[RMDB]
Background:
Structure probing data (2A3 and DMS) for a 207-nucleotide construct. The 2A3 profile rests on 1,033 reads. 2A3 adducts were read by reverse transcription with SuperScript II with manganese. The RNA was probed in 150 mM KOAc, 10 mM MgCl2 and 150 mM bicine (pH 8.5) at 24 C. Source: RMDB library OK3TST, as collected in RNAgym.
RNA sequence: GGGAACGACUCGAGUAGAGUCGAAAACGUCCAGGGUAUGAGCGUAGAAACGAUGAUUGUUAGCUGGGAUAAAGUGCCGUACGCAGUUUUCUAUGACGUCCAGUGGCGAAAGGAUAACGGCAACUGGCAGAACGUUCCGCAGACGGCAAACAAAGAGAUUAUGUCAUGCUUUCGAGCAUGACAUAAUAAAAGAAACAACAACAACAAC
Reactivity to 2A3 in 0.01 (KOAc 150mM, MgCl2 10mM, bicine 150mM(pH8.5), 24C), signal-to-noise 2, nucleotides 027 to 156: c030g030u010c020c000a030g030g020g010u070a070u160g070a090g000c030g000u080a060g090a050a070a050c100g000a050u090g020a050u050u160g090u070u080a030g050c050u020g000g000g070a020u110a100a120a000g080u040g000c000c010g010u010a020c020g000c040a050g010u040u040u050u000c050u050a110u140g050a040c040g050u050c030c030a100g020u090g080g040c020g050a090a020a020g080g010a060u120a220a010c030g020g000c000a040a070c000u030g000g000c010a000g010a080a000c030g000u070u030c050c020g000c050a050g000a070c000g000g070c100a020a060a020c110a000a180a060g130a000g000
Reactivity to DMS in 0.01 (KOAc 150mM, MgCl2 10mM, bicine 150mM(pH8.5), 24C), signal-to-noise 2, nucleotides 027 to 156: c040g030u000c040c010a110g020g050g070u020a060u000g000a070g010c040g030u000a060g000a110a080a040c110g020a130u010g010a110u000u020g000u010u000a080g030c030u030g040g000g020a100u000a070a070a130g030u000g020c000c020g060u000a090c050g020c040a110g000u010u010u000u000c040u000a080u010g020a200c050g020u020c000c000a080g020u020g000g040c030g000a080a110a170g030g020a150u010a070a090c080g000g000c020a100a030c030u000g020g000c090a110g000a090a140c060g000u000u000c010c020g000c050a120g010a040c020g000g010c010a020a060a100c090a060a090a080g020a270g000